This 207-nucleotide RNA was probed chemically with DMS and 2A3. As a SHAPE reagent, 2A3 marks flexible, mostly unpaired nucleotides at the ribose 2'-OH. High DMS reactivity at an A or C suggests that its Watson-Crick edge is free. The RNA was probed in 150 mM KOAc, 10 mM MgCl2 and 150 mM bicine (pH 8.5) at 24 C. The 2A3 profile rests on 1,728 reads. Source: RMDB library OK3TST, as collected in RNAgym. For 2A3 the reverse transcriptase was SuperScript II with manganese.
RNA sequence: GGGAACGACUCGAGUAGAGUCGAAAACUUUUUUUCCAAUUUGCCAUCUGCCAGUUUGCUGACUUGGCAAUAUUUCCACUAUCCAUGUGCCAGCUUUGCAACCUCUCAGCAAGGCUCGCAGCUCCUUCUGCACGAUUUGAGGGUCUUGGCAUAAAUAAAAUGGUGAACAAUUCGUUGUUCACCAUUUAAAAGAAACAACAACAACAAC
Reactivity to DMS in 0.01 (KOAc 150mM, MgCl2 10mM, bicine 150mM(pH8.5), 24C), signal-to-noise 2, nucleotides 027 to 156: c050u000u000u000u000u000u000u000c010c000a060a100u010u010u000g010c010c000a050u000c060u000g030c030c020a060g030u000u000u000g030c020u020g010a030c020u000u010g010g020c040a040a050u000a040u000u010u000c030c020a090c100u000a040u000c050c030a080u000g030u000g030c040c060a050g000c050u000u000u020g000c020a050a020c040c030u010c030u000c070a120g010c040a070a030g000g000c010u010c100g060c040a070g030c090u000c040c030u000u000c030u000g090c070a100c090g010a130u010u000u010g020a070g040g020g000u000c030u000u000g000g040c070a060u000a030a060a090u010a050
Reactivity to 2A3 in 0.01 (KOAc 150mM, MgCl2 10mM, bicine 150mM(pH8.5), 24C), signal-to-noise 3, nucleotides 027 to 156: c020u170u080u020u020u000u060u140c010c050a070a050u040u070u050g020c010c010a020u040c050u070g050c030c040a090g060u090u140u080g120c020u050g030a150c070u060u090g040g010c010a010a010u060a020u040u050u010c020c000a030c010u030a050u030c010c020a060u090g010u020g070c030c030a020g000c030u040u070u080g010c010a040a130c010c030u050c030u030c050a000g000c010a010a000g030g000c020u000c020g000c000a030g010c020u040c020c000u060u070c040u080g020c020a040c140g140a090u160u080u120g040a080g010g000g000u000c020u030u000g000g000c000a050u080a080a130a000u180a010